[RMDB]
RNA sequence: GGGAACGACUCGAGUAGAGUCGAAAACGCACUCGCAGCUUAAUAACCUGCGCUGAGCCCUUCUCCCCCAGCUUGCCUGUGUACUAGGGAAUUGGAAGGUCAUCCUUCACAGGAUCGUGUGGAAGUCAUUACUCGUGAGUGUUCGCACUCACGAGAACCUAAGUAUCGACUUCGGUCGAUACUUAGGAAAAGAAACAACAACAACAAC
Reactivity to DMS in 0.01 (KOAc 150mM, MgCl2 10mM, bicine 150mM(pH8.5), 24C), signal-to-noise 1, nucleotides 027 to 156: c050g000c040a060c040u000c010g010c000a040g110c020u000u000a150a060u000a080a080c250c010u000g030c000g000c130u010g000a050g010c060c000c030u010u010c030u010c090c010c010c020c010a070g030c050u000u000g020c030c010u000g020u000g000u000a050c030u000a100g030g040g000a110a140u010u000g000g000a030a020g000g010u000c070a130u010c000c020u020u000c040a070c090a060g000g010a080u010c070g040u000g000u000g000g010a120a200g030u000c090a070u000u000a120c030u000c000g000u010g000a030g070u020g020u000u010c230g050c020a030c000u010c000a000c000g000a010g000a020a080
Reactivity to 2A3 in 0.01 (KOAc 150mM, MgCl2 10mM, bicine 150mM(pH8.5), 24C), signal-to-noise 3, nucleotides 027 to 156: c050g000c010a040c030u020c030g000c000a000g000c010u050u050a040a010u050a020a050c020c000u000g000c000g050c220u100g030a040g000c000c010c020u110u050c110u030c010c010c010c000c000a000g020c000u030u110g040c010c000u030g000u010g010u030a060c040u050a040g030g020g080a080a090u130u100g050g010a030a020g020g000u100c040a080u080c010c000u020u050c000a030c010a020g020g000a020u100c080g010u020g000u020g090g050a040a060g040u090c070a120u110u150a120c000u000c000g000u000g000a000g000u010g020u020u030c100g010c060a000c000u000c000a000c000g000a000g000a000a000